[RMDB]
RNA sequence: GGGAACGACUCGAGUAGAGUCGAAAAUGUGUCUCCUUCGGGAGACACAAACGCUCGCAGCCCGAGGCCGCACGGCCAAGGCAGCGGCCAGCCAGCGAGCUAUGUGUUAUCAAUUCGUUGAUAACAAAACGUUCCUUCAAUUCGUUGAAGGAACGUUAAAAGAAACAACAACAACAAC
Reactivity to DMS in 0.01 (KOAc 150mM, MgCl2 10mM, bicine 150mM(pH8.5), 24C), signal-to-noise 2, nucleotides 027 to 126: u010g010u000g010u010c000u000c000c000u000u020c110g070g010g030a010g000a000c000a000c010a000a020a110c280g020c000u010c000g010c000a130g000c010c020c020g000a090g010g010c010c000g020c030a060c250g000g010c050c040a050a070g000g020c010a090g000c000g050g000c010c000a050g020c090c100a160g000c010g000a010g010c000u010a020u010g000u000g020u000u000a000u000c000a000a030u010u000c170g020u000u000g020a010u010a000a000c030a070a050
Reactivity to 2A3 in 0.01 (KOAc 150mM, MgCl2 10mM, bicine 150mM(pH8.5), 24C), signal-to-noise 1, nucleotides 027 to 126: u040g010u000g000u000c000u000c010c010u030u060c220g070g000g000a000g010a010c000a010c010a000a000a000c020g000c000u000c000g010c020a010g000c000c000c000g040a080g000g000c000c000g000c020a050c170g200g020c040c040a050a130g080g000c010a010g010c020g020g000c000c000a010g030c010c010a050g010c010g000a000g000c020u070a160u170g230u020g010u020u000a010u010c000a000a010u020u050c150g060u080u030g000a010u010a000a010c000a010a120